[RMDB]
RNA sequence: GGGAACGACUCGAGUAGAGUCGAAAAGAAACUGUAAUAACGAUAAUGGAGAUAAGAAGCGUCACAGCAGCGGCUACAGCGUAUUGUGGCGAAGUACCUGUUGUUAAUUUAUAAAUCCAUGAAAUUACGGCUAGGAUAUGUUCGCAUAUCCUAGCCGAAAAGAAACAACAACAACAAC
Reactivity to 2A3 in 0.01 (KOAc 150mM, MgCl2 10mM, bicine 150mM(pH8.5), 24C), signal-to-noise 1, nucleotides 027 to 126: g300a020a000a020c120u130g100u280a300a020u070a080a000c040g050a000u000a130a030u290g090g000a000g000a050u070a070a040g070a190a000g010c000g010u110c000a000c000a000g030c000a110g000c000g110g000c210u160a140c300a050g070c000g000u050a070u000u240g000u000g000g000c000g000a000a020g000u000a040c010c010u020g000u080u000g000u040u040a150a150u290u000u300a050u070a200a080a000u080c000c000a000u130g300a000a050a000u100u010a000